[RMDB]
RNA sequence: GGGAACGACUCGAGUAGAGUCGAAAAGAAAGAAAGUACUGAAAGUAUUGUGGGAAAUAAUGUGUAAAUCAUUGACCGUUCCUGCGCUGGUAAGAAUAAAAUUUUAGUCUAGACACCACCAGUAUAACCAAUCUAGUGACCUUCGGGUCACUAGAAAUCAACUCUAUUUCUUCGGAAAUAGAGUUGAAAAAGAAACAACAACAACAAC
Reactivity to DMS in 0.01 (KOAc 150mM, MgCl2 10mM, bicine 150mM(pH8.5), 24C), signal-to-noise 2, nucleotides 027 to 156: g060a110a050a090g010a140a110a060g010u000a050c010u000g000a180a090a230g010u000a010u010u010g020u010g010g010g000a110a110a140u010a000a030u010g020u000g000u000a100a160a150u000c020a040u000u010g020a140c030c020g000u000u010c020c000u040g000c090g000c040u000g000g010u000a080a050g000a070a040u000a030a010a050a300u030u000u000u000a070g020u010c040u000a050g020a150c090a090c000c010a010c060c030a030g000u000a100u010a050a100c050c100a040a110u000c000u000a010g030u010g010a040c000c000u000u000c300g090g040g040u010c000a010c000u010a000g010a010a060a120
Reactivity to 2A3 in 0.01 (KOAc 150mM, MgCl2 10mM, bicine 150mM(pH8.5), 24C), signal-to-noise 3, nucleotides 027 to 156: g020a020a060a010g050a070a130a000g020u060a030c040u060g050a110a120a040g050u130a090u190u120g010u040g010g010g040a020a040a050u060a010a000u030g020u030g030u090a000a030a080u080c010a030u020u000g030a030c030c000g000u040u040c010c000u020g000c020g020c030u010g010g020u050a050a040g020a080a060u130a100a120a070a090u100u170u070u100a030g020u010c010u020a030g020a030c040a020c040c000a000c000c000a000g020u050a070u060a130a040c070c040a070a030u000c000u000a000g000u000g000a000c000c000u020u040c240g070g000g020u000c000a000c000u000a000g000a000a000a000